[RMDB]
Source: RMDB library RFMREP, as collected in RNAgym. Chemical mapping of a 177-nucleotide RNA with DMS and 2A3. DMS adducts were read by reverse transcription with MarathonRT. For 2A3 the reverse transcriptase was SuperScript II with manganese. The reactions ran in a buffer of 150 mM KOAc, 10 mM MgCl2 and 150 mM bicine (pH 8.5), at 24 C.
RNA sequence: GGGAACGACUCGAGUAGAGUCGAAAACGUAAGACCUGGAUUGGGCUGCUCCGAUGUAAGUCGGUGAUACUCCGGUAGCCAAGGAUCUUCCUUGGCGAGCACGGUGAGAAUCGGCCCCCAGGGUGAGCUUAAUCUAUGAGUUCGCUCAUAGAUUAAGAAAAGAAACAACAACAACAAC
Reactivity to DMS in 0.01 (KOAc 150mM, MgCl2 10mM, bicine 150mM(pH8.5), 24C), signal-to-noise 8, nucleotides 027 to 126: c080g010u010a090a110g010a100c000c000u000g010g010a240u010u010g010g000g010c010u000g000c050u010c000c000g010a010u000g010u010a070a130g010u000c000g010g000u000g000a120u000a260c150u000c000c000g010g000u000a290g010c000c000a020a010g010g000a100u010c280u000u000c000c000u000u000g000g000c000g000a040g010c090a110c010g000g000u000g000a080g010a130a070u000c070g000g000c000c000c010c000c010a010g000g000g010u000g000a110g010
Reactivity to 2A3 in 0.01 (KOAc 150mM, MgCl2 10mM, bicine 150mM(pH8.5), 24C), signal-to-noise 5, nucleotides 027 to 126: c030g020u030a050a050g140a160c000c000u010g030g030a170u110u210g030g000g000c020u020g010c020u010c010c000g010a010u030g100u210a080a140g020u010c000g010g010u020g030a030u040a070c020u000c020c000g010g040u020a010g000c000c010a010a000g020g000a080u140c090u130u100c150c010u000u000g000g010c020g010a010g010c150a150c050g000g010u040g020a070g050a020a070u070c050g000g010c000c010c010c000c000a000g010g010g010u020g030a010g020
Record summary
The DMS profile rests on 14,514 reads.